[RMDB]
RNA sequence: GGGAACGACUCGAGUAGAGUCGAAAACUAAAGAUUCCAAUUUUUUAAACGAGUCCGGGGUUCUAUUGUAAAUGCCCGAAUAGAACCCUGUUCAAGUGGUUUGUCCACUGAUGUCGUCUUUAGGGCAGAAGUCUGAGCUUCGGCUCAGACAAAAGAAACAACAACAACAAC
Reactivity to DMS in 0.01 (KOAc 150mM, MgCl2 10mM, bicine 150mM(pH8.5), 24C), signal-to-noise 2, nucleotides 027 to 129: c040u020a090a070a170g030a140u050u030c040c020a000a000u050u060u070u020u060u020a030a090a190c080g020a040g020u030c020c040g010g000g000g030u000u030c000u030a030u000u090g030u190a050a080a240u010g000c000c040c030g000a070a000u010a000g000a020a000c010c080c000u010g020u000u080c110a020a000g000u030g020g000u000u000u000g060u050c010c000a020c000u000g010a000u050g020u010c190g010u030c030u070u060u060a070g010g000g020c070a060g020a090a100
Reactivity to 2A3 in 0.01 (KOAc 150mM, MgCl2 10mM, bicine 150mM(pH8.5), 24C), signal-to-noise 4, nucleotides 027 to 129: c040u080a160a060a000g110a040u050u100c030c060a020a110u080u120u060u050u080u300a120a220a010c030g000a000g020u120c080c010g010g000g000g000u000u030c000u000a000u020u010g090u090a050a060a050u090g020c010c010c040g000a010a000u000a000g000a000a000c000c000c000u000g030u000u050c030a070a020g000u010g040g050u110u250u300g110u050c000c000a020c000u000g010a040u010g060u040c010g060u000c110u100u170u240a020g040g000g000c010a000g050a040a010